[RMDB]
RNA sequence: GGGAACGACUCGAGUAGAGUCGAAAAGUGACCUCGCGCGACCUCGAUAAAUACGUCAGAUUCAUGGCAAACAAACGUGCCAACGAGUUGGGCAUCGAAAGGCCAUUCGAAGGGUAUAGGCGGAAUAAUCUCAGAUGGAUUAAGGCGUACGAGGAAACAAGCUAGAAGUAUUCGUACUUCUAGCUUGAAAAGAAACAACAACAACAAC
Reactivity to DMS in 0.01 (KOAc 150mM, MgCl2 10mM, bicine 150mM(pH8.5), 24C), signal-to-noise 3, nucleotides 027 to 156: g010u000g020a180c020c010u010c030g000c040g010c010g000a120c020c020u010c060g050a120u010a070a100a100u000a090c040g030u010c020a140g000a160u010u000c030a090u000g010g000c010a030a030a130c050a070a080a160c230g020u000g020c030c000a040a150c080g010a090g040u000u000g040g010g050c000a020u040c030g000a110a070a120g010g040c010c010a090u010u010c060g010a070a130g000g020g010u000a080u000a050g020g030c000g010g000a070a120u000a010a030u020c020u010c060a180g010a270u000g000g000a100u000u000a060a060g010g020c030g010u000a030c010g010a040g010g000a150a050a120
Reactivity to 2A3 in 0.01 (KOAc 150mM, MgCl2 10mM, bicine 150mM(pH8.5), 24C), signal-to-noise 5, nucleotides 027 to 156: g070u060g090a050c000c000u000c010g010c010g000c010g160a300c000c010u080c030g050a100u070a140a150a030u100a020c020g010u010c010a040g010a120u010u020c010a020u040g050g000c030a070a090a040c060a030a110a010c060g000u020g000c000c000a050a050c050g040a040g080u150u140g050g020g010c010a070u080c070g080a040a060a080g070g000c000c000a010u050u050c020g020a050a010g100g040g010u150a070u080a130g090g000c010g010g020a000a030u090a020a010u030c040u010c080a080g030a170u150g050g020a010u060u050a060a060g020g000c000g000u000a020c010g000a000g000g000a030a020a000
An RNA of 207 nucleotides, treated with DMS and 2A3 and read out base by base. The RNA was probed in 150 mM KOAc, 10 mM MgCl2 and 150 mM bicine (pH 8.5) at 24 C. Reactivities are given for positions 27 through 156.